Conditions: 150 mM KOAc, 10 mM MgCl2 and 150 mM bicine (pH 8.5), 24 C.
Structure probing data (2A3 and DMS) for a 177-nucleotide construct.
2A3 adducts were read by reverse transcription with SuperScript II with manganese.
For DMS, 2,518 sequencing reads were counted.
It was measured as part of the RMDB library OK2TRN.
[RMDB]
RNA sequence: GGGAACGACUCGAGUAGAGUCGAAAAUGAUCGAGAGAUCUAACGAUGUACGCGAGUCUUGUGCACUGACUCGAGCGAAAGCUCGGUCGAAAGACCGCGUACAUCGGUCGGCAAGUGUACAGUCGACAGUCAUAUCCACCUUCGGGUGGAUAUGACUAAAAGAAACAACAACAACAAC
Reactivity to 2A3 in 0.01 (KOAc 150mM, MgCl2 10mM, bicine 150mM(pH8.5), 24C), signal-to-noise 2, nucleotides 027 to 126: u120g010a010u020c010g010a010g000a010g000a060u040c010u020a080a040c010g000a000u010g000u040a000c000g010c000g030a060g090u000c030u000u080g150u080g070c130a050c200u100g000a000c030u050c220g020a000g000c000g040a110a020a010g000c000u000c040g020g000u000c000g020a000a020a000g000a000c020c000g030c000g000u000a000c000a010u000c000g010g000u010c010g000g020c050a180a100g170u130g080u300a090c080a030g010u010c020g010a010c000
Reactivity to DMS in 0.01 (KOAc 150mM, MgCl2 10mM, bicine 150mM(pH8.5), 24C), signal-to-noise 3, nucleotides 027 to 126: u010g010a010u010c000g010a300g000a270g000a010u000c000u000a050a280c010g010a010u000g010u000a000c000g030c010g000a080g010u000c010u000u000g010u010g000c170a100c220u010g000a000c010u010c030g010a010g020c010g000a160a110a160g010c000u000c010g020g020u000c010g010a060a050a040g000a010c000c000g020c000g010u000a010c020a000u010c000g000g000u000c010g030g000c030a060a130g020u010g040u010a080c160a150g010u000c020g000a030c110